RNA sequence: GGGAACGACUCGAGUAGAGUCGAAAACGGCGUAUUCGGCUACUACAUGCUCUACACGCCCGACGCCCGAGGCACGGUCAAGGUUUCCUAGCCUCUCACCCUCUCGGCCGGCGCCGUGCUGCGGCUCGACUGCCGUGUAAUUCGUUACACGGCAGUCAAAAGAAACAACAACAACAAC
Reactivity to 2A3 in 0.01 (KOAc 150mM, MgCl2 10mM, bicine 150mM(pH8.5), 24C), signal-to-noise 2, nucleotides 027 to 126: c020g010g000c030g000u060a100u050u090c030g040g000c030u070a070c050u070a050c110a120u230g020c020u040c040u100a020c050a020c070g030c000c010c000g050a070c060g010c000c020c010g040a080g010g010c030a010c060g040g000u060c080a000a100g070g010u020u050u090c020c000u040a040g000c030c000u030c000u030c030a090c030c000c000u040c010u020c010g060g000c020c010g020g010c020g010c000c010g000u000g030c020u040g000c020g040g000c030u020c020
Reactivity to DMS in 0.01 (KOAc 150mM, MgCl2 10mM, bicine 150mM(pH8.5), 24C), signal-to-noise 4, nucleotides 027 to 126: c220g010g030c000g020u000a160u000u000c140g000g000c000u000a170c120u010a160c190a120u010g000c010u000c080u010a050c110a050c030g010c030c010c060g010a120c210g020c050c030c010g000a120g000g010c020a080c050g000g010u000c080a210a130g000g000u000u000u000c010c030u000a150g010c020c020u010c040u000c070a070c040c020c020u010c020u000c080g030g000c020c010g000g010c110g020c010c000g010u000g010c040u010g000c080g000g000c070u000c090
This 177-nucleotide RNA was probed chemically with 2A3 and DMS.
The data come from the RNA Mapping Database (RMDB), library OK2TST.
DMS adducts were read by reverse transcription with MarathonRT.
For 2A3, 3,210 sequencing reads were counted.